[RMDB]
RNA sequence: GGGAACGACUCGAGUAGAGUCGAAAAAUAUUGUGCACGAACGACACGUGAAGCAACUUGCUUCAGCAUCUCUUAGUGACAUCAAGUUGCAAGUAUGUAAUGAUCGAUCCAAAUCUUAAUGAUGUUAUACCCCGUAUCGGUUCGCCGAUACGGGGUAAAAAGAAACAACAACAACAAC
Reactivity to DMS in 0.01 (KOAc 150mM, MgCl2 10mM, bicine 150mM(pH8.5), 24C), signal-to-noise 1, nucleotides 027 to 126: a030u000a070u010u000g000u030g020c030a040c050g000a070a170c080g010a070c140a040c090g000u000g000a100a130g000c040a070a100c080u000u050g030c080u000u010c120a120g000c050a100u000c100u000c050u020u000a140g000u040g030a090c170a050u000c040a030a050g000u000u000g000c020a010a070g000u000a040u000g010u000a030a160u000g050a110u020c040g030a060u000c060c070a000a180a020u000c030u000u020a050a060u020g010a030u000g000u020u000a160